[RMDB]
The data come from the RNA Mapping Database (RMDB), library OK3TST.
An RNA of 207 nucleotides, treated with 2A3 and read out base by base.
For 2A3, 737 sequencing reads were counted.
The reactions ran in a buffer of 150 mM KOAc, 10 mM MgCl2 and 150 mM bicine (pH 8.5), at 24 C.
RNA sequence: GGGAACGACUCGAGUAGAGUCGAAAAUGGGCGUGGUGGCACAUGCCUGUAGUCCCUGCUUCUCAGGAGGCUGAGGCACGAGAAUUGCUUGAACCUGGGGGGUGGAGGUUGCAGUGAGCCAGGACCAUUCCACUGUACUCCAGCCUGGAUGACAGAGCCAUAUCACGCUUUUCGAAGCGUGAUAUGGAAAAGAAACAACAACAACAAC
Reactivity to 2A3 in 0.01 (KOAc 150mM, MgCl2 10mM, bicine 150mM(pH8.5), 24C), signal-to-noise 1, nucleotides 027 to 156: u110g030g020g000c050g000u050g000g020u020g040g060c090a080c030a170u050g030c030c000u060g050u030a020g090u110c000c000c000u030g000c050u090u030c070u000c050a050g000g010a030g060g000c070u030g060a070g050g010c000a000c070g090a110g010a060a160u140u100g040c020u050u100g000a030a040c030c020u010g000g000g000g000g000g070u020g000g020a020g000g000u050u080g070c030a060g030u040g070a030g000c000c020a030g010g030a110c000c030a040u060u010c040c000a060c000u020g020u070a040c020u010c060c010a080g050c070c060u070g020g010a060u080g020a010c020a030g150a010g030